[RMDB]
RNA sequence: GGGAACGACUCGAGUAGAGUCGAAAAUCCAUAAGGUUCGCCUUAUGGAAAAAGCGGCGAGCUCCAGGCCGCAAAAAUAAAUGGAGCACAAGACGAAAGUCAAAACAGUACUCUUCGGAGUACUGAAUCACAUAUCUUUGUUCGCAAAGAUAUGUGAAAAAGAAACAACAACAACAAC
Reactivity to 2A3 in 0.01 (KOAc 150mM, MgCl2 10mM, bicine 150mM(pH8.5), 24C), signal-to-noise 2, nucleotides 027 to 126: u000c000c000a010u000a010a000g000g010u020u120c180g120c030c000u000u000a000u000g000g000a130a010a000a020a000g000c000g010g010c000g000a070g000c000u000c000c000a010g020g010c030c000g000c050a070a070a000a000a000u040a010a030a010u000g000g010a000g030c010a010c050a010a020g020a000c010g040a100a030a000g010u020c000a070a010a020a030c000a010g000u000a000c000u000c010u020u160c250g110g000a000g010u010a000c000u000g000a000a040
Reactivity to DMS in 0.01 (KOAc 150mM, MgCl2 10mM, bicine 150mM(pH8.5), 24C), signal-to-noise 2, nucleotides 027 to 126: u000c000c000a010u000a000a010g000g000u000u020c250g010c000c000u000u000a000u000g010g000a000a060a070a070a060g000c000g020g010c000g030a070g000c000u000c000c000a010g020g020c000c000g000c010a000a010a010a070a030u000a000a000a110u000g020g000a020g010c010a140c290a040a080g010a010c000g000a110a090a130g000u010c000a080a110a100a150c000a000g010u000a010c010u000c000u000u040c230g020g000a000g000u000a000c000u000g000a030a060